[RMDB]
RNA sequence: GGGAACGACUCGAGUAGAGUCGAAAAAAACGCGUAUCGAUGAGAUUCAGGGCUUACUAGUUCACACAGUUGCAUCCACACACCAAUUGUUUUAACAAUUUGGAGUGAGUGUGUUUUGAUCGAUACGAAAACUAUGCAACUUCGGUUGCAUAGUUUUAAAAGAAACAACAACAACAAC
Reactivity to DMS in 0.01 (KOAc 150mM, MgCl2 10mM, bicine 150mM(pH8.5), 24C), signal-to-noise 6, nucleotides 027 to 126: a060a080a060c170g000c010g020u000a000u010c000g010a010u000g010a090g010a040u010u010c120a100g000g000g000c020u000u030a050c160u040a070g020u010u010c080a110c090a030c050a080g010u010u010g000c060a080u020c070c030a190c050a030c050a070c020c020a020a000u010u000g010u000u020u020u010a060a040c000a010a010u000u010u010g010g010a070g030u000g000a080g000u000g000u000g000u000u020u000u000g010a040u000c000g000a020u000a000c010g000
Reactivity to 2A3 in 0.01 (KOAc 150mM, MgCl2 10mM, bicine 150mM(pH8.5), 24C), signal-to-noise 5, nucleotides 027 to 126: a000a000a000c090g020c020g000u000a010u000c010g000a010u040g030a020g020a110u130u070c080a070g020g010g030c010u040u060a050c060u110a080g130u070u080c060a020c000a010c000a150g040u130u080g040c010a040u040c020c000a010c000a010c010a000c020c000a020a000u010u000g100u070u130u110u210a110a050c020a010a010u050u020u180g040g000a050g010u040g020a100g020u040g020u000g020u030u010u010u040g060a010u000c000g000a000u000a010c000g010